[RMDB]
RNA sequence: GGGAACGACUCGAGUAGAGUCGAAAAUUGGCAACAAAAAUGCUGUAUUUCACAUCAAAACUUGUAGGCCUUUCUCUAUAGAACCAGCUAUUGGAACUCUUAAUGUGGGAGAGUCCAUGCAACUGGACAGGAAGUUAGCAUUCGUGCUAACUUCCUGAAAAGAAACAACAACAACAAC
Reactivity to DMS in 0.01 (KOAc 150mM, MgCl2 10mM, bicine 150mM(pH8.5), 24C), signal-to-noise 2, nucleotides 027 to 126: u000u020g000g000c000a090a040c050a000a050a050a160a190u000g000c050u000g020u000a090u020u010u010c090a050c020a030u000c040a050a040a070a150c180u000u000g000u000a100g000g010c000c000u010u000u000c010u020c050u010a230u010a090g010a130a100c000c000a010g010c040u010a140u020u010g010g000a030a070c010u000c010u010u000a120a090u010g000u030g030g010g010a010g010a080g000u000c000c010a040u010g000c060a150a090c050u010g010g010a300
Reactivity to 2A3 in 0.01 (KOAc 150mM, MgCl2 10mM, bicine 150mM(pH8.5), 24C), signal-to-noise 1, nucleotides 027 to 126: u090u030g000g010c000a010a000c000a010a130a020a020a040u060g030c050u020g040u030a150u040u300u160c090a020c000a030u070c020a000a060a030a010c050u030u030g050u120a110g120g000c020c000u030u030u020c050u000c030u040a140u000a220g110a120a080c010c010a020g000c010u030a070u050u030g040g040a140a100c000u000c000u080u110a280a200u300g070u190g120g210g000a000g000a010g030u040c000c010a000u000g010c010a050a060c040u010g000g040a040

Conditions: 150 mM KOAc, 10 mM MgCl2 and 150 mM bicine (pH 8.5), 24 C. Structure probing data (DMS and 2A3) for a 177-nucleotide construct. The DMS profile rests on 892 reads. The 2A3 profile rests on 1,132 reads.